[RMDB]
RNA sequence: GGGAACGACUCGAGUAGAGUCGAAAACGACAAGGGUGUAAAGAUCGCUCUCUUACUCGGCAUGAUACCACCGUUAUCGGGUCAACAGAGUAGUUGCAAAUGACAACAAUGCUCAGGGUUAUGCUCUAAAAGUUCGUACCCUUCGGGGUACGAACAAGAACGUGAGUUUCUUCGGAAACUCACGUUCAAAAGAAACAACAACAACAAC
Reactivity to 2A3 in 0.01 (KOAc 150mM, MgCl2 10mM, bicine 150mM(pH8.5), 24C), signal-to-noise 2, nucleotides 027 to 156: c060g050a030c070a030a070g010g040g010u050g060u160a130a120a050g090a130u180c030g000c010u020c000u000c000u060u120a070c040u030c020g000g000c030a030u070g020a070u130a110c000c040a020c000c020g080u060u030a090u170c030g020g050g010u020c000a030a000c040a030g020a000g010u020a020g020u060u000g050c110a160a190a200u160g080a100c010a030a010c000a010a140u080g010c010u010c060a000g030g000g000u080u090a060u160g040c010u030c000u080a090a090a000a090g000u000u000c000g000u000a010c000c000c000u050u020c150g030g000g010g000u000a000c000g000a000a010c000a000a000

Source information
Structure probing data (2A3) for a 207-nucleotide construct. It was measured as part of the RMDB library M2RFPK. The reactions ran in a buffer of 150 mM KOAc, 10 mM MgCl2 and 150 mM bicine (pH 8.5), at 24 C. Values cover nucleotides 27 to 156.